[RMDB]
About this RNA: The record gives the reactivity of an RNA of 207 nucleotides to 2A3. For 2A3, 1,997 sequencing reads were counted. 2A3 adducts were read by reverse transcription with SuperScript II with manganese.
RNA sequence: GGGAACGACUCGAGUAGAGUCGAAAAGGUCCAGUUCGCUGGACCACGAUGGGGUCCACCUAAGACAGGACAUGCGUGUAUACUGAAGCCUCCACGGUAUACAACGCAACAGCUCGAGGUGGACGGAGGCACCCUCAACCGCCCAUUCGUGGGCGAAGUACGUCAAUACUUUCGAGUAUUGACGUACAAAAGAAACAACAACAACAAC
Reactivity to 2A3 in 0.01 (KOAc 150mM, MgCl2 10mM, bicine 150mM(pH8.5), 24C), signal-to-noise 3, nucleotides 027 to 156: g010g000u000c030c000a010g000u080u140c300g040c070u010g010g010a000c010c070a070c100g090a170u230g090g010g120g030u010c000c000a000c000c000u140a270a110g050a100c090a090g220g130a040c120a170u080g000c000g000u000g000u010a000u000a000c010u000g050a090a030g020c010c000u020c000c010a020c010g000g020u000a000u010a010c020a090a060c010g060c020a100a210c060a110g020c020u000c020g040a030g000g000u000g000g000a010c000g000g010a000g000g000c000a000c000c010c000u060c020a130a230c100c020g000c040c000c000a030u070u070c260g100u050g000g010g000c020g010a060a030